[RMDB]
RNA sequence: GGGAACGACUCGAGUAGAGUCGAAAAGUAGUGAACUGCGGUCUCCAGAUCAGAAGCCCGCUUGAUGUCAAAAAGGUAUUAGUAGAAGACGUUGCCUUCACGGGGAUGUGUGAAGAUUGGGCGACAGCCGUAGCUAAAAAUUCGUUUUUAGCUACGGAAAAGAAACAACAACAACAAC
Reactivity to DMS in 0.01 (KOAc 150mM, MgCl2 10mM, bicine 150mM(pH8.5), 24C), signal-to-noise 9, nucleotides 027 to 126: g020u010a070g020u010g010a080a100c070u000g010c050g010g000u000c020u000c020c040a110g000a110u010c100a090g010a110a180g010c040c010c020g020c100u000u000g010a050u000g000u000c050a030a070a080a090a080g010g010u000a060u010u000a090g010u000a090g010a090a080g010a060c060g010u000u000g010c050c010u000u000c040a040c070g000g000g010g010a080u010g010u000g010u000g010a050a060g000a140u000u010g010g010g010c020g010a050c110a120g010
Reactivity to 2A3 in 0.01 (KOAc 150mM, MgCl2 10mM, bicine 150mM(pH8.5), 24C), signal-to-noise 9, nucleotides 027 to 126: g060u120a010g020u020g120a120a050c040u040g010c020g030g040u000c010u000c020c020a060g020a190u090c030a040g100a190a020g030c010c010c010g020c020u040u100g070a080u050g040u060c040a050a020a040a090a070g090g010u110a080u180u110a150g120u030a040g030a170a000g050a030c040g030u030u040g010c010c000u030u030c030a030c030g020g020g050g060a100u110g100u020g010u010g100a020a020g030a110u120u200g030g000g010c010g010a020c010a010g020
The record gives the reactivity of an RNA of 177 nucleotides to DMS and 2A3. The reactions ran in a buffer of 150 mM KOAc, 10 mM MgCl2 and 150 mM bicine (pH 8.5), at 24 C. As a SHAPE reagent, 2A3 marks flexible, mostly unpaired nucleotides at the ribose 2'-OH. The DMS profile rests on 26,404 reads. Values cover nucleotides 27 to 126. The 2A3 profile rests on 18,443 reads. DMS (dimethyl sulfate) methylates the pairing face of unpaired adenines and cytosines.